[RMDB]
RNA sequence: GGGAACGACUCGAGUAGAGUCGAAAACGCUUUAUAUUAAGGAUGGCGACGAUGGUUACUUCCUUCCUUAUCCAGACCCUUCAAGAAUUUUGUCUGCCGGUUGCUUUGUAGAUGAUAUCGUUAAGACUCAACAGCGGAUUCGUCCGCUGUAAAAGAAACAACAACAACAAC
Reactivity to DMS in 0.01 (KOAc 150mM, MgCl2 10mM, bicine 150mM(pH8.5), 24C), signal-to-noise 5, nucleotides 027 to 129: c100g020c050u020u050u050a090u020a100u000u000a120a040g000g030a000u020g010g010c190g030a000c000g030a090u020g050g000u030u020a080c160u000u000c060c030u010u010c010c010u010u020a120u010c110c060a000g010a100c010c000c000u000u000c110a100a100g040a080a100u000u000u000u000g020u030c030u040g000c100c030g050g000u020u030g040c100u000u000u000g030u020a040g080a050u000g030a080u030a060u050c060g030u000u060a080a130g020a030c070u000c060a090
Reactivity to 2A3 in 0.01 (KOAc 150mM, MgCl2 10mM, bicine 150mM(pH8.5), 24C), signal-to-noise 4, nucleotides 027 to 129: c050g010c010u130u170u050a230u050a040u170u230a040a020g070g000a000u020g020g000c040g020a030c030g020a060u160g060g030u130u030a040c020u070u050c000c000u000u100c000c020u070u010a070u080c040c020a000g060a110c030c000c000u050u050c040a080a060g050a120a050u030u080u070u140g080u030c000u030g000c020c000g020g000u040u020g000c050u050u030u030g010u060a040g000a050u060g050a020u020a000u100c010g070u050u020a110a010g020a020c010u000c030a020
Chemical mapping of a 170-nucleotide RNA with DMS and 2A3. The reactions ran in a buffer of 150 mM KOAc, 10 mM MgCl2 and 150 mM bicine (pH 8.5), at 24 C. For DMS the reverse transcriptase was MarathonRT. 2A3 adducts were read by reverse transcription with SuperScript II with manganese. For DMS, 18,003 sequencing reads were counted. For 2A3, 5,193 sequencing reads were counted.